[RMDB]
RNA sequence: GGGAACGACUCGAGUAGAGUCGAAAAUUCUGCAACCCUCUUUAGGGUAUGUGUUAGCCAUAUUUUAGGAUGGAAACAUGAAUACAAGAUAUAUUUACUCUUGUUAGGUGAAAGUUGAUGGUCGCCGCCUACCUAUAGGAUUCGUCCUAUAGGUAGGAAAAGAAACAACAACAACAAC
Reactivity to 2A3 in 0.01 (KOAc 150mM, MgCl2 10mM, bicine 150mM(pH8.5), 24C), signal-to-noise 8, nucleotides 027 to 126: u030u000c010u070g080c030a060a060c000c020c000u030c070u080u180u300a030g010g040g000u050a110u100g030u000g010u000u020a040g010c000c000a020u040a110u030u230u100u250a200g170g040a010u000g000g000a010a050a000c010a010u060g100a100a030u090a080c010a010a000g070a010u020a000u020a080u140u240u110a090c030u020c000u030u020g060u090u100a060g000g020u020g040a050a020a010g030u050u050g040a120u090g080g020u020c000g000c010c000g010
Reactivity to DMS in 0.01 (KOAc 150mM, MgCl2 10mM, bicine 150mM(pH8.5), 24C), signal-to-noise 9, nucleotides 027 to 126: u010u000c020u000g010c120a120a070c010c000c010u000c250u020u010u020a010g010g010g010u010a060u020g010u000g000u000u000a170g000c020c010a010u000a010u000u020u030u020a070g030g000a010u000g000g000a050a020a020c000a020u000g000a130a060u020a040c010a010a020g000a020u000a120u020a120u020u020u020a080c180u000c000u000u000g000u000u010a060g010g030u000g000a080a080a090g000u010u000g000a080u010g010g010u000c010g010c020c040g020
An RNA of 177 nucleotides, treated with 2A3 and DMS and read out base by base. The RNA was probed in 150 mM KOAc, 10 mM MgCl2 and 150 mM bicine (pH 8.5) at 24 C.